Chemical mapping of a 207-nucleotide RNA with 2A3 and DMS. The RNA was probed in 150 mM KOAc, 10 mM MgCl2 and 150 mM bicine (pH 8.5) at 24 C. Source: RMDB library RSTRND, as collected in RNAgym. DMS adducts were read by reverse transcription with MarathonRT.
RNA sequence: GGGAACGACUCGAGUAGAGUCGAAAACAGAGAUGGGCUGUGGCACCAGGUUAACGACCUCGGGUAUGGUAACAACGCCUGAGAUUGGACAAUCCGCAGCCAAGCUCCCUCAUGGGAAGAAGGUUCAGAGACUAGAUGGUUGUGGGUUGAACACGUUUAUUAUGAUGAUCUUCGGAUCAUCAUAAUAAAAAGAAACAACAACAACAAC
Reactivity to 2A3 in 0.01 (KOAc 150mM, MgCl2 10mM, bicine 150mM(pH8.5), 24C), signal-to-noise 4, nucleotides 027 to 156: c070a020g080a000g040a080u190g020g010g000c010u030g000u040g100g000c030a040c050c030a050g040g050u040u080a090a000c050g030a040c050c010u020c020g020g000g000u080a090u190g080g010u080a110a030c050a060a030c130g010c000c000u010g020a010g010a040u040u080g030g010a000c030a060a040u030c010c000g000c020a000g030c000c000a010a000g020c010u010c000c000c010u110c060a140u210g070g000g020a040a050g030a010a020g080g010u080u080c080a020g050a000g010a100c040u050a040g020a170u090g080g010u010u010g010u030g020g080g020u000u030g000a020a010c050a000c070g010u000u010
Reactivity to DMS in 0.01 (KOAc 150mM, MgCl2 10mM, bicine 150mM(pH8.5), 24C), signal-to-noise 1, nucleotides 027 to 156: c040a090g000a060g000a050u000g030g010g050c030u010g030u000g040g020c090a070c050c030a080g010g040u000u010a060a170c030g010a030c010c000u000c000g020g080g060u000a050u000g000g070u010a120a150c080a100a080c100g020c030c010u000g040a040g000a060u000u000g010g010a140c050a030a060u000c030c040g030c010a090g060c030c010a030a090g030c030u000c000c040c020u000c100a170u000g030g030g010a050a130g010a120a100g040g000u000u010c050a160g010a110g000a050c040u020a040g030a130u000g020g030u000u010g040u000g040g000g000u000u000g000a080a070c070a150c140g010u000u010